Conditions: 150 mM KOAc, 10 mM MgCl2 and 150 mM bicine (pH 8.5), 24 C. The record gives the reactivity of an RNA of 155 nucleotides to 2A3. 2A3 adducts were read by reverse transcription with SuperScript II with manganese.
RNA sequence: GGGAACGACUCGAGUAGAGUCGAAAAAUAAGCAUGCAAAAUAAAAUGAAAUAAAAUAAAAAGGCCGCAUGCAAAUAGCCUUUUUUAAAGAAAAAUAAGAAAUCAUUAAAAUAAAAACGUUAUCUUCGGAUGACGAAAAGAAACAACAACAACAAC
Reactivity to 2A3 in 0.01 (KOAc 150mM, MgCl2 10mM, bicine 150mM(pH8.5), 24C), signal-to-noise 2, nucleotides 027 to 135: a010u090a020a040g000c010a020u050g000c040a030a020a060a200u270a160a090a070a050u140g090a070a040a090u300a210a060a110a000u090a000a000a040a040a000g030g000c180c150g020c050a000u020g000c010a030a120a000u060a030g000c000c000u000u000u020u000u040u100a060a140a040g080a000a060a020a050a050u210a140a050g060a110a070a030u060c020a040u100u210a070a070a100a050u210a010a130a040a040a020c000g000u030u020a000u010c000u000u030c190g110g000a010u020g010a000c000g030a070